The data come from the RNA Mapping Database (RMDB), library OK2TST. The record gives the reactivity of an RNA of 177 nucleotides to 2A3 and DMS. The RNA was probed in 150 mM KOAc, 10 mM MgCl2 and 150 mM bicine (pH 8.5) at 24 C. For 2A3 the reverse transcriptase was SuperScript II with manganese. The 2A3 profile rests on 1,730 reads. DMS adducts were read by reverse transcription with MarathonRT.

RNA sequence: GGGAACGACUCGAGUAGAGUCGAAAAUGCAAUCUGGUGAAGUGUAGCCCUACAAUUGGAAGACUUCUCUCAGGUGCUUAUCAUUACACCUGAAUUAUGAGAGAUCCUGCCAUUCAACAGAUUAGAGGUUAUCGUUUCGUUUCGACGAAACGAUAACAAAAGAAACAACAACAACAAC
Reactivity to 2A3 in 0.01 (KOAc 150mM, MgCl2 10mM, bicine 150mM(pH8.5), 24C), signal-to-noise 2, nucleotides 027 to 126: u130g040c000a000a020u030c010u020g040g000u020g030a080a030g080u040g020u110a040g000c000c030c010u020a050c060a160a250u130u060g020g020a030a010g040a090c030u080u060c020u000c020u000c000a000g000g000u020g000c050u070u140a240u160c140a110u120u160a020c000a000c030c000u000g040a120a110u250u140a200u300g020a010g010a000g000a010u000c010c020u060g060c000c010a000u000u010c010a040a050c010a030g020a030u030u030a040g050a060g180
Reactivity to DMS in 0.01 (KOAc 150mM, MgCl2 10mM, bicine 150mM(pH8.5), 24C), signal-to-noise 2, nucleotides 027 to 126: u000g010c090a040a010u000c030u000g010g000u000g010a030a050g000u010g000u000a120g000c030c050c010u010a070c120a100a180u020u000g010g030a100a120g010a110c030u000u000c000u000c010u000c000a020g010g000u000g020c090u000u030a090u000c300a110u010u000a140c000a010c000c000u000g020a030a140u040u010a120u010g010a020g010a000g000a050u000c050c030u010g030c010c000a130u000u000c020a020a000c020a020g010a030u010u000a180g030a160g030